[RMDB]
RNA sequence: GGGAACGACUCGAGUAGAGUCGAAAAAUACUAAACAAGUCCGAACUAAUUGAAUACUUGUGUCAGAAAUUCCUCGAAUCGGUUUGCCAUUUCCAUAAAGGAUAUAAUUGACAAUUCGAAGUUGCACCAAGAUGGAGCGUUUCGACGCUCCAUCUUGAAAAGAAACAACAACAACAAC
Reactivity to 2A3 in 0.01 (KOAc 150mM, MgCl2 10mM, bicine 150mM(pH8.5), 24C), signal-to-noise 1, nucleotides 027 to 126: a000u090a000c000u060a000a120a000c040a000a000g130u130c060c080g150a070a000c160u210a140a110u230u140g040a010a000u010a180c100u050u000g000u040g050u140c000a040g030a000a100a000u060u040c000c000u060c050g060a000a130u000c000g210g000u000u000u000g080c000c010a000u000u000u000c000c000a050u300a300a000a140g000g000a000u080a040u000a170a100u000u100g040a110c000a010a030u060u080c030g030a010a000g000u300u210g000c000a000c030
Reactivity to DMS in 0.01 (KOAc 150mM, MgCl2 10mM, bicine 150mM(pH8.5), 24C), signal-to-noise 1, nucleotides 027 to 126: a000u010a140c130u030a110a220a000c000a070a000g000u000c130c060g050a220a180c240u090a010a030u000u060g000a200a280u000a030c000u000u000g000u000g000u000c220a070g000a160a040a220u020u020c000c000u000c180g000a000a000u000c000g000g000u000u000u000g000c000c030a000u000u000u000c010c000a000u030a110a000a300g000g000a010u000a000u010a000a180u000u000g000a000c060a070a040u000u000c070g130a000a000g000u090u120g000c250a200c160